RNA sequence: GGGAACGACUCGAGUAGAGUCGAAAAACAACUGAUUGGAACCUGAAUGACUACAAAUUAGUUUAGUGACAGAACAAACUGUCACAGAUAUCUUUGAGUCGGUUGAAAAUGAAUAAGGUUGACAGAAACUCAAGAGCCUAAUAAGUCCUCAGAAUGAUAUGAUGGUCAUGUUCGCAUGACCAUCAUAAAAAGAAACAACAACAACAAC
Reactivity to DMS in 0.01 (KOAc 150mM, MgCl2 10mM, bicine 150mM(pH8.5), 24C), signal-to-noise 1, nucleotides 027 to 156: a090c030a030a170c030u010g020a070u000u000g020g020a110a070c090c050u000g020a080a090u000g000a150c030u020a100c070a030a060a060u000u000a060g050u000u000u000a130g050u000g000a000c030a010g040a080a230c200a170a150a300c000u010g020u000c010a040c000a110g010a110u000a120u000c160u010u000u010g000a030g000u010c040g030g000u030u000g000a070a040a070a040u000g000a080a080u030a110a130g010g030u010u040g000a250c050a120g000a030a080a080c000u030c040a000a090g000a010g010c070c040u000a010a120u010a060a100g000u000c010c010u000c030a070g000a070a040u000g000a250
Reactivity to 2A3 in 0.01 (KOAc 150mM, MgCl2 10mM, bicine 150mM(pH8.5), 24C), signal-to-noise 1, nucleotides 027 to 156: a000c060a030a010c040u040g040a090u070u110g030g040a010a010c010c010u040g000a120a070u140g020a040c000u150a070c180a000a090a080u080u070a050g060u030u150u070a000g000u030g000a000c010a000g060a190a110c030a150a070a030c050u000g030u000c000a000c000a000g000a000u040a020u010c010u000u000u040g020a020g000u000c000g070g040u070u090g020a040a130a060a130u170g040a000a020u150a120a040g070g000u050u040g010a000c000a000g060a050a060a000c010u020c100a060a030g010a000g110c000c010u020a050a050u050a050a030g030u040c030c000u000c000a010g000a130a070u090g030a070